This 177-nucleotide RNA was probed chemically with DMS. The reactions ran in a buffer of 150 mM KOAc, 10 mM MgCl2 and 150 mM bicine (pH 8.5), at 24 C. For DMS the reverse transcriptase was MarathonRT. Source: RMDB library M2PK90, as collected in RNAgym.

[RMDB]
RNA sequence: GGGAACGACUCGAGUAGAGUCGAAAAGUUGCCCGAGAAGAGAUCACACAGAUGAGACACAAGGAGCGAUGUCUCAUCACUUGGUUUUCGAGAAGUGACGAGUCGUUCCCAAAAUCGCUCCAAUGAACAUUUACUAGCGGUUCGCCGCUAGUAAAUGAAAAGAAACAACAACAACAAC
Reactivity to DMS in 0.01 (KOAc 150mM, MgCl2 10mM, bicine 150mM(pH8.5), 24C), signal-to-noise 2, nucleotides 027 to 126: g010u010u000g000c190c000c000g000a070g000a110a120g000a110g010a050u000c070a050c220a120c140a150g000a020u010g000a000g010a030c000a030c110a080a090g040g010a030g000c000g030a070u000g000u000c000u010c010a000u000c000a080c120u000u000g000g010u000u000u020u000c000g000a170g010a170a160g030u010g000a130c020g000a000g000u000c020g000u000u000c000c000c000a000a000a050a050u010c030g010c000u000c000c000a050a100u000g000a090a200